[RMDB]
Notes:
The record gives the reactivity of an RNA of 177 nucleotides to 2A3 and DMS. The RNA was probed in 150 mM KOAc, 10 mM MgCl2 and 150 mM bicine (pH 8.5) at 24 C. 2A3 adducts were read by reverse transcription with SuperScript II with manganese. For DMS, 3,455 sequencing reads were counted. For DMS the reverse transcriptase was MarathonRT. The data come from the RNA Mapping Database (RMDB), library OK1LIB. The 2A3 profile rests on 1,751 reads.
RNA sequence: GGGAACGACUCGAGUAGAGUCGAAAAGGCCGGGCGCUUUAACUUCCCGGCGAAUAGGUAACAUGGUGGGUCUUUCGUGUAGGAAGUUUUGCAUCCAGCCGACAGGAGGACCGUUUUAAACAUAUCCCUCGUAACACGUAUUCGUACGUGUUACGAGAAAAGAAACAACAACAACAAC
Reactivity to 2A3 in 0.01 (KOAc 150mM, MgCl2 10mM, bicine 150mM(pH8.5), 24C), signal-to-noise 3, nucleotides 027 to 126: g080g000c010c020g030g020g000c080g000c060u300u120u220a090a090c050u090u050c000c000c000g010g010c000g000a000a070u100a000g080g050u080a150a030c020a160u150g120g010u120g220g040g030u020c000u010u030u000c040g230u060g020u080a030g000g010a060a050g010u020u110u170u300g070c040a080u020c000c040a020g100c010c000g000a020c000a030g010g040a000g000g020a000c000c000g030u000u010u000u150a010a000a000c020a020u050a020u120c040c000
Reactivity to DMS in 0.01 (KOAc 150mM, MgCl2 10mM, bicine 150mM(pH8.5), 24C), signal-to-noise 3, nucleotides 027 to 126: g020g010c000c010g000g000g030c300g000c120u040u020u030a070a080c180u020u000c000c000c020g000g000c000g030a010a040u050a030g030g020u000a100a080c140a110u040g040g020u010g010g000g010u000c020u000u010u010c020g010u000g020u000a060g000g010a090a030g000u030u000u070u000g060c060a100u020c110c060a090g010c010c010g010a040c190a110g010g020a020g020g000a040c020c030g010u010u000u000u020a030a090a060c140a030u010a130u010c040c050